[RMDB]
RNA sequence: GGGAACGACUCGAGUAGAGUCGAAAAGAUAUGGAUGUGAGUUUCGCUUGGAUUUACAAUCGGAAACGAUUGUUGUCAGCGACACUCUGCAUCCUAAGUCAAAGUAUUUGAGUUCGCUCAAAUACAACACUGCCUUGUACUUCGGUACAAGGCAGUGAAAAGAAACAACAACAACAAC
Reactivity to 2A3 in 0.01 (KOAc 150mM, MgCl2 10mM, bicine 150mM(pH8.5), 24C), signal-to-noise 2, nucleotides 027 to 126: g010a050u040a040u170g000g000a020u000g000u020g010a000g000u060u000u000c030g000c060u160u300g240g010a150u300u300u230a010c010a010a000u010c000g010g050a050a050a030c010g000a000u000u000g030u020u000g020u000c000a000g000c020g000a010c010a000c000u020c030u040g000c000a010u000c000c010u000a160a010g030u040c040a070a170a000g000u000a020u000u000u000g010a030g030u100u140c300g090c130u030c020a000a000a000u030a000c000a030a000
Reactivity to DMS in 0.01 (KOAc 150mM, MgCl2 10mM, bicine 150mM(pH8.5), 24C), signal-to-noise 1, nucleotides 027 to 126: g000a050u000a300u010g000g030a000u000g000u000g000a010g030u000u000u000c000g020c000u000u010g030g010a040u000u000u000a000c000a010a000u000c000g010g000a080a050a280c000g000a020u000u000g020u010u000g010u000c010a000g000c010g010a030c090a000c000u010c000u010g060c020a010u000c000c000u010a080a180g000u000c040a140a150a190g010u000a010u000u010u010g000a010g010u000u010c290g010c010u000c000a000a000a020u000a000c000a140a260
The record gives the reactivity of an RNA of 177 nucleotides to 2A3 and DMS. The data come from the RNA Mapping Database (RMDB), library TTRDES. The RNA was probed in 150 mM KOAc, 10 mM MgCl2 and 150 mM bicine (pH 8.5) at 24 C. 2A3 adducts were read by reverse transcription with SuperScript II with manganese. The 2A3 profile rests on 2,688 reads.